[RMDB]
RNA sequence: GGGAACGACUCGAGUAGAGUCGAAAAGCCGAUGAAUUGCCGAGAAGCCUGGCUCGAAAUCGUCGACGCAUCGACGACGGUCCCGCCAUGAGACCGUAACGAGGACAUGUCGCCUCGAAUGGCGUCGUAUAACAUGAGUGGUUCGCCACUCAUGUAAUCAUACUAGAGAAUUCGUUCUCUAGUAUGAAAAAGAAACAACAACAACAAC
Reactivity to 2A3 in 0.01 (KOAc 150mM, MgCl2 10mM, bicine 150mM(pH8.5), 24C), signal-to-noise 6, nucleotides 027 to 156: g030c000c010g010a040u130g060a060a230u170u110g020c020c020g040a030g050a120a030g030c050c080u100g030g000c020u030c040g090a140a110a040u020c010g020u010c010g010a040c060g010c120a110u070c010g000a000c000g000a000c000g000g000u000c010c010c000g000c020c000a030u050g030a020g010a090c010c000g030u050a000a020c000g010a020g000g010a020c040a140u200g050u150c070g010c000c000u010c010g010a010a010u020g010g030c000g010u030c030g010u050a120u050a240a010c000a000u000g000a000g010u010g040g000u040u060c180g020c050c000a000c000u000c000a000u000g000u000a000a000
Reactivity to DMS in 0.01 (KOAc 150mM, MgCl2 10mM, bicine 150mM(pH8.5), 24C), signal-to-noise 3, nucleotides 027 to 156: g020c000c020g010a070u010g010a110a070u000u000g020c060c020g000a140g000a090a150g010c040c050u000g030g050c000u000c040g010a080a100a090u000c020g000u000c010g030a070c080g000c090a130u000c030g010a060c010g000a040c000g010g010u000c000c000c020g040c100c220a130u010g000a020g000a040c000c010g000u010a050a090c030g000a070g050g000a100c060a120u000g000u000c050g010c000c000u000c020g020a110a120u000g010g010c000g020u000c030g000u000a060u000a120a060c000a000u010g010a000g040u000g000g030u000u000c300g030c020c000a010c000u010c000a000u000g010u000a020a150